[RMDB]
RNA sequence: GGGAACGACUCGAGUAGAGUCGAAAAGAUAUGGAGCGGUACUCAGCAUCGAUCUCGGAAACGAGGGAGCUGGUACGCCGCUCCUAAGUCAAACCUGACAUUUGGUCUUCGGACCAAAUGUCAGGAACAUACAAACGGAGUUCGCUCCGUUUGUAUGAAAAGAAACAACAACAACAAC
Reactivity to 2A3 in 0.01 (KOAc 150mM, MgCl2 10mM, bicine 150mM(pH8.5), 24C), signal-to-noise 4, nucleotides 027 to 126: g020a010u080a040u190g000g000a000g000c010g000g010u030a040c060u060c240a010g010c010a200u300c050g070a100u020c010u000c000g050g030a110a090a070c020g010a010g010g010g000a010g000c020u010g000g010u040a060c230g000c010c010g000c000u000c000c000u010a060a010g040u010c030a060a050a100c000c000u000g000a000c000a000u000u000u000g000g000u010c000u020u100c300g100g000a000c000c000a000a010a000u010g000u000c000a000g000g000a000a000
Reactivity to DMS in 0.01 (KOAc 150mM, MgCl2 10mM, bicine 150mM(pH8.5), 24C), signal-to-noise 6, nucleotides 027 to 126: g000a040u000a300u000g000g010a020g020c000g000g020u000a070c120u010c010a000g030c020a300u000c160g010a040u010c000u000c000g000g000a090a100a210c010g000a030g000g000g000a020g030c010u000g010g020u000a040c190g010c050c010g010c000u000c000c000u010a010a100g000u000c020a100a090a160c010c000u000g000a010c000a000u000u000u000g000g000u000c000u000u010c210g020g000a020c010c000a000a000a010u000g000u000c000a000g000g010a020a060

Structure probing data (2A3 and DMS) for a 177-nucleotide construct. For DMS the reverse transcriptase was MarathonRT. For DMS, 7,924 sequencing reads were counted.